RNA sequence: GGGAACGACUCGAGUAGAGUCGAAAACGAAACCGUAGAAACCACCAGUGCCGAACAGGCGUCGCAGGUUGUUCAACUACAAAACGUUGGUGCAUGUGCAAUUCGCUAUAAAGGCAAAAAUUACGUCUAUGAGCAGGUUUUUGAAGUGCCGGAAGACGCAUUCAUUAGUAUUCGUACUAAUGAAUGCAAAAGAAACAACAACAACAAC
Reactivity to DMS in 0.01 (KOAc 150mM, MgCl2 10mM, bicine 150mM(pH8.5), 24C), signal-to-noise 3, nucleotides 027 to 156: c050g000a110a080a150c040c050g010u000a120g000a090a060a070c020c020a080c050c010a140g030u010g000c040c000g000a110a100c080a110g020g010c020g020u000c070g030c070a110g030g020u000u000g010u000u000c000a060a080c010u000a180c070a090a110a090a120c070g040u010u000g020g020u000g010c040a150u010g020u000g020c020a040a120u000u000c030g020c050u000a120u010a040a080a130g020g000c010a000a050a050a060a090u000u020a060c040g000u000c010u000a080u000g010a060g030c030a110g020g010u000u000u000u000u000g000a090a080g020u000g050c010c010g000g000a070a060g020a110c130
Reactivity to 2A3 in 0.01 (KOAc 150mM, MgCl2 10mM, bicine 150mM(pH8.5), 24C), signal-to-noise 4, nucleotides 027 to 156: c040g030a110a020a010c060c040g010u040a020g040a110a020a010c010c030a020c010c020a060g030u020g060c010c010g040a120a100c070a130g020g020c010g020u030c040g000c090a070g040g000u000u000g000u030u030c040a080a040c020u040a030c030a030a120a080a010c060g020u030u040g040g030u070g000c050a080u060g020u040g040c010a050a100u080u100c010g000c020u030a030u090a250a060a070g030g020c050a100a130a030a020a010u110u090a050c060g020u000c040u060a050u100g030a010g020c040a040g030g060u030u070u020u050u170g070a080a030g020u020g050c020c000g020g010a020a010g040a000c060